Chemical mapping of a 177-nucleotide RNA with DMS and 2A3.
RNA sequence: GGGAACGACUCGAGUAGAGUCGAAAAACGGUGGCGCCAUCGCGAUGGGCCACCCGCUGGGUGCCACCGGCGCGAUGAUCCUGGGCACCAUGGUCGACGAACUGGAGCGCCGCAACGCCCGACGUGCACAUCUCUCACCGUUCGCGGUGAGAGAUGUAAAAGAAACAACAACAACAAC
Reactivity to DMS in 0.01 (KOAc 150mM, MgCl2 10mM, bicine 150mM(pH8.5), 24C), signal-to-noise 1, nucleotides 027 to 126: a070c120g000g000u000g000g010c020g010c020c000a040u000c080g030c190g000a140u010g000g000g010c200c020a020c000c020c010g000c090u000g000g020g010u000g000c010c010a030c210c000g010g010c100g000c010g010a090u000g000a060u000c020c030u000g000g000g000c080a070c030c070a030u000g010g020u010c020g030a100c140g000a120a060c060u000g000g020a130g000c020g000c020c020g010c050a100a130c120g020c000c020c000g000a090c080g020u000g000c140
Reactivity to 2A3 in 0.01 (KOAc 150mM, MgCl2 10mM, bicine 150mM(pH8.5), 24C), signal-to-noise 1, nucleotides 027 to 126: a000c030g000g000u010g010g010c180g000c090c000a000u030c070g010c070g120a080u080g030g010g000c040c000a040c010c000c000g030c060u120g000g000g030u000g000c000c000a150c010c040g020g010c000g000c000g060a070u170g000a030u040c000c010u000g000g030g110c040a110c100c000a060u130g090g030u030c020g030a080c050g020a160a060c090u080g060g060a060g020c030g000c000c030g000c020a030a060c070g070c040c000c010g080a050c010g070u080g020c040
Values cover nucleotides 27 to 126. For 2A3, 1,367 sequencing reads were counted. Values are in units of 0.01, from 0 to 300, in steps of 10. The data come from the RNA Mapping Database (RMDB), library OK2TRN. Conditions: 150 mM KOAc, 10 mM MgCl2 and 150 mM bicine (pH 8.5), 24 C.